[RMDB]
RNA sequence: GGGAACGACUCGAGUAGAGUCGAAAAAUGUCAAGCCAAGAACUACCAGAGAGUCUGUGACGUACCUUUUGGCAACGACAACUUGCGUCUAUCUUAGUUCCCUUUGGAAACGGAUGUGCGUCGUUCAUUGUGUUGAUAACGUCACCAGACAGAUGCGACAAGAGGGUUUUUUCGAAAACCCUCUUGUAAAAGAAACAACAACAACAAC
Reactivity to 2A3 in 0.01 (KOAc 150mM, MgCl2 10mM, bicine 150mM(pH8.5), 24C), signal-to-noise 2, nucleotides 027 to 156: a000u100g060u130c010a030a030g000c030c010a050a030g060a080a010c010u090a060c120c020a000g070a000g000a020g210u020c000u010g020u020g000a010c020g000u060a060c030c030u030u110u060u170g070g000c020a020a050c000g060a010c000a080a060c060u110u130g030c020g050u000c040u060a060u050c020u060u170a030g010u050u040c000c000c000u050u070u160g030g030a030a020a010c020g010g010a000u040g030u030g100c040g000u020c010g020u000u020c070a130u110u060g030u020g010u090u100g080a170u050a150a000c010g000u000c020a020c080c000a070g030a000c000a020g040a020u160g020c040g040
Reactivity to DMS in 0.01 (KOAc 150mM, MgCl2 10mM, bicine 150mM(pH8.5), 24C), signal-to-noise 2, nucleotides 027 to 156: a060u020g010u000c030a120a140g020c020c020a120a190g000a090a100c040u000a130c030c060a140g000a110g030a080g020u010c030u010g050u000g010a050c010g010u000a060c020c000u000u030u000u010g060g030c030a050a080c040g000a110c030a020a020c010u020u010g020c030g020u000c020u000a120u010c090u000u010a180g010u010u010c030c020c050u000u010u010g090g020a020a050a040c060g010g010a090u010g020u010g020c150g000u000c040g000u010u010c060a170u010u000g030u000g030u000u000g000a100u010a060a060c010g010u000c020a060c050c030a100g010a100c050a070g000a090u000g000c020g020